Description: The data come from the RNA Mapping Database (RMDB), library OK2TRN. Structure probing data (DMS) for a 177-nucleotide construct. DMS (dimethyl sulfate) methylates the pairing face of unpaired adenines and cytosines. The DMS profile rests on 630 reads.
[RMDB]
RNA sequence: GGGAACGACUCGAGUAGAGUCGAAAAAAGGCUGGAGUGCCUGGGAUUCACGUUGAAAUGGCCAAUCCGUCAGCUGGGCUGGACACAGCCAUCACGCUGGGCAGCUGUGAGGUUAAAACAGAAAGUCUACCACUCUCUGCUUCGGCAGAGAGUGGUAAAAAGAAACAACAACAACAAC
Reactivity to DMS in 0.01 (KOAc 150mM, MgCl2 10mM, bicine 150mM(pH8.5), 24C), signal-to-noise 1, nucleotides 027 to 126: a120a040g000g040c010u000g010g000a120g010u000g000c070c070u000g000g000g040a130u020u000c100a010c100g000u000u000g040a060a040a100u010g040g000c020c040a130a070u010c040c030g020u000c060a120g040c010u000g000g010g010c010u000g000g010a150c300a090c000a020g020c000c010a100u010c010a080c130g000c050u000g000g010g020c080a090g010c000u040g060u000g010a140g000g020u000u000a010a110a080a070c100a070g000a130a100a120g000u000c020